[RMDB]
Source: RMDB library OK2TRN, as collected in RNAgym.
This 177-nucleotide RNA was probed chemically with DMS and 2A3.
RNA sequence: GGGAACGACUCGAGUAGAGUCGAAAAUUGUAGGCUAAAUUGGGUUAAUGUUAGCAAUUGGAUGCCCGAUACAGCAAGCUCAUUGCAUGACCUCUGACAUUGGCCAUAUUAUUUUAGAGGUGACAAAAUAUACGUCGAGAUUCGUCUCGACGUAUAUAAAAGAAACAACAACAACAAC
Reactivity to DMS in 0.01 (KOAc 150mM, MgCl2 10mM, bicine 150mM(pH8.5), 24C), signal-to-noise 4, nucleotides 027 to 126: u010u010g010u010a070g010g000c020u010a030a090a080u010u010g010g010g020u000u010a030a050u000g000u000u000a100g020c040a020a030u010u010g010g010a120u000g020c000c020c040g000a120u010a080c220a120g010c090a060a090g000c040u010c090a040u000u000g010c010a120u000g000a050c030c010u000c010u000g000a020c040a030u000u000g010g010c010c020a060u000a040u000u000a090u000u000u000u000a030g000a010g020g000u000g010a130c100a070a080a080
Reactivity to 2A3 in 0.01 (KOAc 150mM, MgCl2 10mM, bicine 150mM(pH8.5), 24C), signal-to-noise 2, nucleotides 027 to 126: u120u080g030u080a120g040g080c090u100a020a180a110u220u240g070g010g000u040u090a060a020u030g030u020u050a030g000c010a020a050u020u070g120g000a030u120g040c000c020c000g010a090u080a180c040a030g040c050a020a030g020c010u030c050a040u010u030g000c010a010u090g030a020c000c000u010c020u000g000a000c000a050u000u010g010g000c020c020a020u090a050u290u070a100u000u140u030u060a020g010a010g060g020u020g030a040c040a030a120a160

For 2A3 the reverse transcriptase was SuperScript II with manganese. The 2A3 profile rests on 1,483 reads. Reactivities are rounded to 0.1 and cut off at 0 and 3.